[RMDB]
RNA sequence: GGGAACGACUCGAGUAGAGUCGAAAAGAUAUGGAGGUUGGUGGAGAUGUUCGGGUCGUUGAUCUAGAGUCGGAAACGACUCUAGGGAGACCGGAACAUCGCUGACAACCUCCUAAGUCAAAAUCAUAUUAUGUCGGUUCGCCGACAUAAUAUGAAAGGAAUAAUAGGAGUUCGCUCCUAUUAUUCCAAAAGAAACAACAACAACAAC
Reactivity to 2A3 in 0.01 (KOAc 150mM, MgCl2 10mM, bicine 150mM(pH8.5), 24C), signal-to-noise 2, nucleotides 027 to 156: g000a010u050a030u140g000g010a000g000g010u010u010g010g070u130g010g170a110g000a010u000g000u000u020c090g110g030g000u000c000g090u180u030g000a000u000c000u000a000g010a000g000u000c020g040g030a020a040a040c020g020a000c000u000c000u010a010g000g010g000a030g000a000c010c110g040g000a000a000c000a080u090c030g020c160u270g010a020c000a010a010c000c010u000c000c000u000a010a000g010u000c010a020a000a030a180u050c000a000u030a030u020u000a000u010g000u000c010g020g040u040u050c200g050c090c000g000a000c000a000u000a000a000u000a000u000g010a010a000a000
The record gives the reactivity of an RNA of 207 nucleotides to 2A3. Source: RMDB library RNAMAK, as collected in RNAgym. For 2A3, 2,085 sequencing reads were counted. The RNA was probed in 150 mM KOAc, 10 mM MgCl2 and 150 mM bicine (pH 8.5) at 24 C.